[RMDB]
Structure probing data (2A3 and DMS) for a 177-nucleotide construct. Conditions: 150 mM KOAc, 10 mM MgCl2 and 150 mM bicine (pH 8.5), 24 C. For 2A3, 1,067 sequencing reads were counted. Values cover nucleotides 27 to 126.
RNA sequence: GGGAACGACUCGAGUAGAGUCGAAAAGCCAGCAGCCGCGGUAAUACCAGCUCCAGUAGCGUCUGUGUUUAUUGCUGCGGUUAAAACGUGCGUAGUCGGCUAGUUGUGUGAAUAGUGAUUCGGGAUGAGUAUUUAUAAUCUUCGGAUUAUAAAUACUAAAAGAAACAACAACAACAAC
Reactivity to 2A3 in 0.01 (KOAc 150mM, MgCl2 10mM, bicine 150mM(pH8.5), 24C), signal-to-noise 2, nucleotides 027 to 126: g060c000c000a010g020c020a000g000c020c000g040c000g000g070u030a000a000u020a040c010c030a000g010c080u000c030c020a190g040u150a080g060c040g110u040c080u000g150u040g040u070u140u040a010u010u040g010c030u000g030c000g000g000u020u010a020a000a010a000c040g020u050g040c020g010u030a030g080u090c000g040g020c000u040a070g100u130u060g020u000g020u000g050a070a100u070a100g020u070g080a150u070u070c020g020g000g050a070u100g040
Reactivity to DMS in 0.01 (KOAc 150mM, MgCl2 10mM, bicine 150mM(pH8.5), 24C), signal-to-noise 8, nucleotides 027 to 126: g000c010c000a140g010c100a120g010c000c000g010c000g010g010u000a010a010u000a030c050c010a040g000c080u010c050c110a200g020u020a110g000c130g000u010c050u010g000u020g010u010u020u010a010u010u000g000c000u000g000c010g010g000u000u010a020a030a090a110c110g010u000g010c040g000u010a060g010u010c070g010g010c030u000a070g000u000u000g000u000g010u010g010a070a070u020a090g010u010g000a140u000u000c030g010g010g010a130u020g000